Structure probing data (2A3 and DMS) for a 177-nucleotide construct.

[RMDB]
RNA sequence: GGGAACGACUCGAGUAGAGUCGAAAAGACGCCUGUGUGGCGAAGCGAGCAUGAGAUGGAGCCGCAAGAGAAGAUGAGAUAGAAGCGGCGAGAUAGCUUGCUCGCCAAAAGAUCCAUCUCACAGAGACAUCGCGUACUAUUUCGAUAGUACGCGAUGAAAAGAAACAACAACAACAAC
Reactivity to 2A3 in 0.01 (KOAc 150mM, MgCl2 10mM, bicine 150mM(pH8.5), 24C), signal-to-noise 4, nucleotides 027 to 126: g100a020c020g070c010c030u160g080u080g070u110g070g000c040g020a050a010g000c030g000a010g000c050a090u140g010a020g000a120u020g030g060a000g010c010c010g030c060a130a030g120a020g080a170a100g100a090u300g090a040g070a090u280a100g060a130a010g030c000g000g000c020g000a000g000a020u090a020g060c000u000u040g000c000u000c000g000c000c000a020a000a000a000g000a030u010c000c000a010u000c000u020c010a070c010a070g090a010g030a050
Reactivity to DMS in 0.01 (KOAc 150mM, MgCl2 10mM, bicine 150mM(pH8.5), 24C), signal-to-noise 3, nucleotides 027 to 126: g000a110c070g000c020c010u000g010u020g050u000g000g040c040g010a070a070g010c030g000a020g050c030a070u000g000a050g010a000u000g000g020a300g010c000c000g000c030a080a170g010a110g000a060a090g020a210u020g000a180g000a150u050a150g060a140a140g000c040g000g000c020g000a260g020a010u020a060g020c090u010u010g010c000u010c000g030c000c030a020a000a060a070g020a150u030c030c010a060u010c000u000c010a090c130a080g010a130g000a210